[RMDB]
RNA sequence: GGGAACGACUCGAGUAGAGUCGAAAACUGAGAGCUAUACCGGAUGCGGUAUCAAAUGCUCUUACAGAUUGGGCCAUCGCAACUCCUGCUGAAUGGAAGACUGCAGUCCCGGCAUAUGUGCCUCGCGUAUACGUGGAGAGUUCGCUCUCCACGUAUAAAAAGAAACAACAACAACAAC
Reactivity to DMS in 0.01 (KOAc 150mM, MgCl2 10mM, bicine 150mM(pH8.5), 24C), signal-to-noise 3, nucleotides 027 to 126: c130u000g010a050g010a060g010c000u000a120u000a010c000c000g010g020a170u000g030c030g010g000u000a000u000c250a060a080a070u010g010c010u000c010u000u000a090c140a030g010a170u010u000g000g000g000c030c040a040u000c100g000c060a060a080c090u010c030c030u000g030c030u010g010a100a100u010g010g000a070a070g010a070c100u010g010c030a070g010u000c020c030c010g010g000c040a050u000a050u010g030u000g010c030c000u000c110g020c160g020
Reactivity to 2A3 in 0.01 (KOAc 150mM, MgCl2 10mM, bicine 150mM(pH8.5), 24C), signal-to-noise 1, nucleotides 027 to 126: c020u040g020a020g000a000g000c000u040a000u000a040c010c010g120g080a190u300g300c060g000g030u000a010u070c050a040a150a090u120g000c000u000c000u020u020a040c030a050g050a090u150u140g050g000g030c050c030a070u030c040g000c060a020a060c030u040c050c020u070g010c010u060g030a160a150u070g050g020a040a000g040a080c050u040g010c030a030g040u070c020c010c000g000g000c050a090u190a150u260g160u090g060c010c020u020c060g140c010g040
The data come from the RNA Mapping Database (RMDB), library OK2TST. This 177-nucleotide RNA was probed chemically with DMS and 2A3. The RNA was probed in 150 mM KOAc, 10 mM MgCl2 and 150 mM bicine (pH 8.5) at 24 C. For DMS, 3,241 sequencing reads were counted. DMS adducts were read by reverse transcription with MarathonRT.